[RMDB]
RNA sequence: GGGAACGACUCGAGUAGAGUCGAAAAGAUAUGGAGUCCCGUUAGGGAGCGAAGUCGGAAACGACAUCGCGACGAUCUAACUGUAGGACUCCUAAGUCAAACAGGUCUGUCUUCGGACAGACCUGAACUCGUCUAUACACUUCGGUGUAUAGACGAGAAAAGAAACAACAACAACAAC
Reactivity to DMS in 0.01 (KOAc 150mM, MgCl2 10mM, bicine 150mM(pH8.5), 24C), signal-to-noise 2, nucleotides 027 to 126: g000a050u010a300u000g000g000a020g010u000c000c010c040g010u000u000a000g040g000g000a030g010c000g010a000a040g050u010c000g010g000a110a070a230c010g020a020c000a030u010c000g010c000g000a070c220g000a020u000c010u000a010a020c000u020g060u040a130g020g000a010c010u000c000c000u000a000a070g020u000c030a140a160a190c000a000g000g000u000c010u010g000u000c000u000u010c250g020g000a010c010a040g010a000c000c000u000g000a040a060
Reactivity to 2A3 in 0.01 (KOAc 150mM, MgCl2 10mM, bicine 150mM(pH8.5), 24C), signal-to-noise 2, nucleotides 027 to 126: g040a020u090a090u220g000g010a030g010u000c000c010c000g000u000u010a020g010g010g000a020g000c000g040a040a000g000u010c000g000g040a060a070a050c020g030a000c010a060u020c000g000c000g060a220c010g010a020u060c010u010a010a010c050u170g230u300a130g000g000a010c010u000c010c000u010a030a010g030u020c040a030a070a090c000a000g000g000u000c010u000g000u000c020u030u180c300g080g000a000c000a030g000a010c000c010u000g000a000a000
The record gives the reactivity of an RNA of 177 nucleotides to DMS and 2A3.
Source: RMDB library TTRDEL, as collected in RNAgym.
In probing experiments dimethyl sulfate is read out at A N1 and C N3, which are open when not base-paired.
The 2A3 profile rests on 3,288 reads.
The DMS profile rests on 1,836 reads.
The RNA was probed in 150 mM KOAc, 10 mM MgCl2 and 150 mM bicine (pH 8.5) at 24 C.